Description:
Structure probing data (2A3 and DMS) for a 177-nucleotide construct. The data come from the RNA Mapping Database (RMDB), library OK2TRN. For DMS the reverse transcriptase was MarathonRT. 2A3 is a SHAPE reagent: it acylates the 2'-hydroxyl of flexible nucleotides of all four kinds.
[RMDB]
RNA sequence: GGGAACGACUCGAGUAGAGUCGAAAACUCAUCACGAUAACCAUCGUGUAAGGAGGUGAUCCAGCGCCAGGUUCCCCUAGCGCUACCUUGUUACGACUUCACCCCAGUCAUGAACCACAAAGUGGCAGGUCAUAUUUAGGUUCGCCUAAAUAUGACCAAAAGAAACAACAACAACAAC
Reactivity to 2A3 in 0.01 (KOAc 150mM, MgCl2 10mM, bicine 150mM(pH8.5), 24C), signal-to-noise 4, nucleotides 027 to 126: c030u010c030a050u050c000a010c010g020a020u040a140a170c100c070a030u000c010g000u010g010u040a050a120g120g030a040g000g030u070g030a090u030c070c060a020g030c010g040c020c010a020g070g020u100u120c070c060c000c030u010a000g040c010g000c030u020a050c000c010u040u110g110u110u090a080c080g020a030c020u080u030c080a100c000c020c010c010a000g000u010c010a040u080g080a040a050c020c020a030c080a130a160a010g040u040g050g060c090a060
Reactivity to DMS in 0.01 (KOAc 150mM, MgCl2 10mM, bicine 150mM(pH8.5), 24C), signal-to-noise 5, nucleotides 027 to 126: c040u000c030a060u000c020a020c010g010a020u000a110a200c290c220a160u000c000g020u000g010u020a070a120g000g000a060g000g010u000g000a090u020c100c130a070g000c030g010c020c050a040g010g010u010u000c060c060c000c070u010a070g000c040g000c000u000a050c060c040u000u000g000u000u000a110c080g000a050c030u000u010c060a190c040c010c010c050a080g000u000c030a080u000g000a120a160c080c070a030c090a050a080a130g010u000g000g030c100a090